[RMDB]
RNA sequence: GGGAACGACUCGAGUAGAGUCGAAAAUUCAUGGAGACCCAUCCCACACUGGAUGCCCUACACUGUGACAUCGGCAAUGCCACUGAGUUUAACAAAAUAUUCCAAGAUGAGAUUAGGGAGGUGUCGCCGUGGUGGACUGAUUCGUCAGUCCACCACGAAAAGAAACAACAACAACAAC
Reactivity to 2A3 in 0.01 (KOAc 150mM, MgCl2 10mM, bicine 150mM(pH8.5), 24C), signal-to-noise 3, nucleotides 027 to 126: u040u020c000a030u120g130g000a030g030a120c000c000c000a010u040c030c020c000a080c000a010c030u070g070g000a060u060g050c030c010c000u010a030c040a020c070u040g000u020g090a010c000a010u000c060g000g080c050a040a000u030g030c000c000a070c050u020g030a010g080u030u080u230a140a070c090a030a080a050a020u150a150u090u030c020c030a020a130g130a180u100g030a030g010a080u040u220a100g010g010g010a000g040g000u050g040u000c010g000c030
Reactivity to DMS in 0.01 (KOAc 150mM, MgCl2 10mM, bicine 150mM(pH8.5), 24C), signal-to-noise 2, nucleotides 027 to 126: u030u000c030a070u000g010g000a150g000a080c010c020c000a090u010c010c000c020a180c070a110c030u030g000g000a090u020g000c060c010c000u010a080c050a140c100u040g050u050g000a100c010a000u000c070g000g060c080a070a050u030g010c000c000a010c020u000g000a130g000u000u000u000a120a050c200a060a020a000a030u070a100u000u000c030c030a100a140g030a050u090g030a070g020a090u020u000a070g000g000g010a130g030g020u010g030u020c040g020c160